[RMDB]
RNA sequence: GGGAACGACUCGAGUAGAGUCGAAAACCUCCAAGCCUGAAUACUCUCCUGUGACCGAUAGCGCACAAGUACCGUGAGGGAAAGGUGAAAAGCACCCCGGGAGGGGAGUGAAACAGUACCUGAAACCCGUAUCGUUACUGUUCGCAGUAACGAUACGAAAAGAAACAACAACAACAAC
Reactivity to 2A3 in 0.01 (KOAc 150mM, MgCl2 10mM, bicine 150mM(pH8.5), 24C), signal-to-noise 1, nucleotides 027 to 126: c000c000u010c040c020a050a020g040c000c020u060g030a050a040u080a190c010u000c000u000c000c040u100g060u120g210a080c020c010g060a070u040a040g050c040g020c040a020c000a110a000g000u030a010c000c020g060u050g050a090g030g020g030a090a000a000g280g000u020g000a060a060a040a050g010c020a020c030c050c000c020g010g020g030a040g000g010g030g000a000g000u050g000a010a010a000c000a000g030u040a070c020c000u060g080a090a060a070c050c000
Reactivity to DMS in 0.01 (KOAc 150mM, MgCl2 10mM, bicine 150mM(pH8.5), 24C), signal-to-noise 2, nucleotides 027 to 126: c050c010u000c090c030a110a150g020c200c020u000g010a050a170u000a060c020u000c010u010c000c000u000g010u010g010a110c070c020g020a100u000a200g010c030g000c020a030c020a050a000g020u030a150c040c000g000u040g010a300g020g000g000a090a080a100g020g000u000g000a050a040a180a180g000c000a080c080c100c020c020g000g020g000a070g010g020g000g000a000g010u010g000a110a070a070c040a030g010u000a060c100c060u000g000a040a050a150c070c100